Description:
An RNA of 177 nucleotides, treated with 2A3 and DMS and read out base by base. The 2A3 profile rests on 788 reads. It was measured as part of the RMDB library OK2TRN. The reactions ran in a buffer of 150 mM KOAc, 10 mM MgCl2 and 150 mM bicine (pH 8.5), at 24 C.
RNA sequence: GGGAACGACUCGAGUAGAGUCGAAAAGAUGAUAUUCAUUUAUCAAGUAUGCGCCAUACAUAUGAAGUGGAUAGCUGCAUAGGGAGUGGGACAGAAAUGAUAUUUUCGCAAAAUAUAUUUCGUCGUCCUUGCGGUAAUGUUUCGACAUUACCGCAAGAAAAGAAACAACAACAACAAC
Reactivity to 2A3 in 0.01 (KOAc 150mM, MgCl2 10mM, bicine 150mM(pH8.5), 24C), signal-to-noise 1, nucleotides 027 to 126: g080a040u130g030a010u000a040u050u090c030a040u040u040u190a060u050c040a000a040g040u010a020u060g010c030g010c040c040a010u050a150c020a010u290a140u250g050a210a050g020u020g030g020a030u020a070g070c120u110g000c050a020u060a030g080g040g000a060g060u150g000g000g000a010c030a090g030a040a020a000u090g060a030u010a010u010u000u020u070c040g000c070a010a010a050a000u040a010u010a020u010u040u020c070g040u030c040g000u030c000
Reactivity to DMS in 0.01 (KOAc 150mM, MgCl2 10mM, bicine 150mM(pH8.5), 24C), signal-to-noise 3, nucleotides 027 to 126: g010a110u010g000a060u000a020u000u000c290a110u010u000u000a050u000c040a060a170g020u000a030u000g000c030g010c070c020a060u000a070c060a030u010a090u010g010a120a150g030u010g010g010a020u010a050g010c050u010g000c070a030u000a040g010g000g030a110g020u000g000g000g000a040c060a060g010a010a020a010u000g000a010u000a010u000u000u000u010c300g020c300a080a030a030a010u000a020u000a060u000u000u000c010g020u010c180g010u000c040
2A3 adducts were read by reverse transcription with SuperScript II with manganese.